[RMDB]
RNA sequence: GGGAACGACUCGAGUAGAGUCGAAAAGAUAUGGACCGUUGUGGACAUGCUCGAUUGGGUCGGAAACGACCUAAAGAGCAACAGCCAUGACGGUCCUAAGUCUAAAAGACGCCGUUCGCGGCGUCAACGUACAUGAAGCCUUCGGGCUUCAUGUACGAAAAGAAACAACAACAACAAC
Reactivity to DMS in 0.01 (KOAc 150mM, MgCl2 10mM, bicine 150mM(pH8.5), 24C), signal-to-noise 1, nucleotides 027 to 126: g020a020u010a300u010g010g000a000c020c010g000u000u000g010u030g010g010a040c140a230u000g030c000u000c000g020a270u000u000g020g010g020u000c000g000g000a070a070a130c020g000a010c000c000u000a020a040a200g000a050g050c000a020a100c300a120g000c010c010a000u000g000a000c000g000g000u000c010c000u000a000a060g020u000c000u000a050a050a180a110g010a000c020g040c000c000g020u000u000c290g010c020g010g000c000g060u000c000a000a060